RNA sequence: GGGAACGACUCGAGUAGAGUCGAAAAGAUAUGGAAUCCCGUAGACAUGCUGUGCACAUCGGAAACGAUGUGAUCAGCAACAGCUACCGGGAUUCCUAAGUCAAAGCAACUCCUUCGGGAGUUGCAAGUGUUAUCCUACGUUCGCGUAGGAUAACACAAAAGAAACAACAACAACAAC
Reactivity to 2A3 in 0.01 (KOAc 150mM, MgCl2 10mM, bicine 150mM(pH8.5), 24C), signal-to-noise 1, nucleotides 027 to 126: g010a020u050a010u140g020g010a000a010u010c010c000c000g000u000a000g000a060c100a270u300g000c010u070g120u300g090c000a000c000a000u010c000g000g070a110a040a000c010g010a000u000g000u000g020a010u020c000a010g070c010a000a000c060a030g020c030u050a030c130c220g000g040g000a000u000u000c020c000u000a000a010g030u010c060a050a090a030g040c000a020a010c010u000c020c000u060u120c300g120g020g000a000g000u000u020g000c000a020a000
Reactivity to DMS in 0.01 (KOAc 150mM, MgCl2 10mM, bicine 150mM(pH8.5), 24C), signal-to-noise 2, nucleotides 027 to 126: g010a040u000a300u000g000g000a060a000u000c000c010c010g000u000a020g020a020c090a260u000g010c000u000g000u000g030c000a020c010a000u000c010g000g020a140a140a130c000g020a000u000g020u000g030a060u000c000a020g020c000a040a050c300a150g010c010u000a000c110c110g050g000g000a010u000u000c000c000u000a010a090g030u020c030a130a100a160g020c010a010a010c000u000c000c000u000u000c220g040g010g000a020g000u000u000g030c000a000a020

An RNA of 177 nucleotides, treated with 2A3 and DMS and read out base by base. The reactions ran in a buffer of 150 mM KOAc, 10 mM MgCl2 and 150 mM bicine (pH 8.5), at 24 C. Reactivities are given for positions 27 through 126. For 2A3, 3,500 sequencing reads were counted.